[RMDB]
Notes
Structure probing data (2A3) for a 207-nucleotide construct. The reactions ran in a buffer of 150 mM KOAc, 10 mM MgCl2 and 150 mM bicine (pH 8.5), at 24 C. It was measured as part of the RMDB library OK3TST.
RNA sequence: GGGAACGACUCGAGUAGAGUCGAAAAAUAUCAUUUGUAUUCAAUAGAAAACAUCUUACGUGUAUAGUCAACAGUACACCGAAGAAUGCCAGGUUCAACAACGACUUGCUUAUGAGAAUGGUACAGAACUCGUCUAUGCAUUCGCUGAUGUAGACCACGGUAUGGCGUCAUUCGUGACGCCAUACCGAAAAGAAACAACAACAACAAC
Reactivity to 2A3 in 0.01 (KOAc 150mM, MgCl2 10mM, bicine 150mM(pH8.5), 24C), signal-to-noise 1, nucleotides 027 to 156: a000u150a030u210c080a130u130u080u060g050u080a150u110u100c040a000a000u070a120g070a000a080a030a000c020a010u080c020u080u210a140c110g000u040g010u000a050u000a050g170u130c040a120a000c060a060g000u000a020c000a020c050c000g000a080a000g110a090a000u040g000c060c060a040g020g000u090u120c060a080a120c040a000a080c050g020a030c030u000u010g010c000u110u070a020u240g080a050g040a120a070u140g000g000u020a000c010a000g040a040a090c040u030c080g020u020c030u060a050u110g000c000a030u030u020c110g000c170u060g000a070u050g000u030a140g010a030c000c000a020